An RNA of 207 nucleotides, treated with 2A3 and read out base by base. 2A3 adducts were read by reverse transcription with SuperScript II with manganese.
RNA sequence: GGGAACGACUCGAGUAGAGUCGAAAAGAAACUUAUUUCUCAAACGUCUGGAGGCUGGGAAGUCCAAGACCAAGGGCUGACACAGUCGGUGUCCAGUGAGAUUUUGCUUCCUGGUUCAUAGAUCACUACCUUCUCUUUGUGUCCUCACUUGAAAGGAACUACGAGGUACCUUCGGGUACCUCGUAGUAAAAGAAACAACAACAACAAC
Reactivity to 2A3 in 0.01 (KOAc 150mM, MgCl2 10mM, bicine 150mM(pH8.5), 24C), signal-to-noise 1, nucleotides 027 to 156: g060a080a060a000c050u130u120a120u190u190u080c060u000c000a180a130a150c070g070u070c060u070g000g000a000g000g020c000u000g030g000g000a030a000g010u010c140c110a110a040g050a040c020c040a030a040g000g030g030c000u030g030a030c070a030c010a300g020u060c000g060g080u060g020u000c000c000a020g010u040g030a060g010a040u050u100u170u080g010c020u060u000c000c000u030g000g050u090u030c070a010u100a050g020a060u080c050a000c140u070a070c090c030u070u100c000u070c000u100u100u100g080u030g000u080c040c040u100c000a100c030u070u040g110a100a040a000g010g010a010